[RMDB]
RNA sequence: GGGAACGACUCGAGUAGAGUCGAAAAAUACACCAGCAGUAGGACUCAGCUACCGUCACAACAAGGUUGUGCUGGUAUCCGACGGUCGUAUAGCCCUGUCUUGCAGGUUGCCUUGCACUGACGUGCCACACCAUUUACAGAUUCGUCUGUAAAUGAACCACUCUAAUGACUUCGGUCAUUAGAGUGGAAAAGAAACAACAACAACAAC
Reactivity to 2A3 in 0.01 (KOAc 150mM, MgCl2 10mM, bicine 150mM(pH8.5), 24C), signal-to-noise 5, nucleotides 027 to 156: a000u120a010c050a020c020c000a010g030c040a030g020u140a030g000g020a010c010u010c090a020g000c000u010a010c010c000g060u050c030a040c030a230a090c040a230a130g060g020u020u010g050u060g030c040u020g010g020u020a060u020c020c030g020a010c000g020g000u030c040g010u060a030u060a150g020c010c010c010u010g040u040c050u050u080g000c010a000g010g000u100u140g050c010c010u040u050g000c020a050c070u080g040a040c060g060u080g040c030c020a090c010a050c040c010a000u000u000u020a010c000a010g010a020u010u110c130g120u000c090u010g010u000a000a000a000u000g000a010a010
Reactivity to DMS in 0.01 (KOAc 150mM, MgCl2 10mM, bicine 150mM(pH8.5), 24C), signal-to-noise 2, nucleotides 027 to 156: a120u010a090c020a240c000c010a100g000c030a110g040u000a040g020g020a040c030u010c070a130g000c020u000a000c000c010g020u000c040a150c070a110a110c090a140a100g040g020u010u020g040u010g000c000u000g020g070u000a050u000c050c000g000a040c110g010g020u010c110g030u000a130u000a060g020c020c010c020u000g010u000c040u010u010g030c030a070g030g020u000u000g000c010c080u010u000g000c000a080c060u020g020a170c150g020u000g020c000c010a100c050a090c100c000a000u000u000u000a000c000a010g000a080u000u010c300g050u000c010u000g010u000a000a010a010u010g000a080a190
Conditions: 150 mM KOAc, 10 mM MgCl2 and 150 mM bicine (pH 8.5), 24 C.
This 207-nucleotide RNA was probed chemically with 2A3 and DMS.
The data come from the RNA Mapping Database (RMDB), library M2RFPK.
For 2A3, 4,597 sequencing reads were counted.
High DMS reactivity at an A or C suggests that its Watson-Crick edge is free.
DMS adducts were read by reverse transcription with MarathonRT.